[RMDB]
This 207-nucleotide RNA was probed chemically with 2A3.
Source: RMDB library RNAMAK, as collected in RNAgym.
The 2A3 profile rests on 1,422 reads.
RNA sequence: GGGAACGACUCGAGUAGAGUCGAAAAGAUAUGGACGCUUCUCUAGCGUGACCGAAGAACACAUAGCAGAGUACAUCGGAAACGAUGUACGAUCUAUGUGGGAGGUUCGGGAGCGUCCUAAGUCAAACAACCAUACUCCUUCGGGAGUAUGGUUGAAGCUGUGUUUAGCGUUCGCGCUAAACACAGCAAAAGAAACAACAACAACAAC
Reactivity to 2A3 in 0.01 (KOAc 150mM, MgCl2 10mM, bicine 150mM(pH8.5), 24C), signal-to-noise 2, nucleotides 027 to 156: g010a000u030a020u060g000g000a000c040g000c040u190u050c050u100c110u150a050g090c140g300u210g030a000c000c000g110a150a000g000a000a020c020a010c000a000u010a000g070c120a000g180a000g010u000a000c000a000u000c000g000g000a000a030a030c020g000a010u000g000u020a000c000g000a010u000c000u000a000u000g000u000g010g010g010a020g000g010u040u090c040g010g000g000a040g000c010g000u030c000c000u000a000a010g010u020c020a090a040a040c000a010a000c010c000a000u000a000c000u000c000c000u030u130c240g180g000g000a020g000u000a000u000g030g000u010u000g000a000a000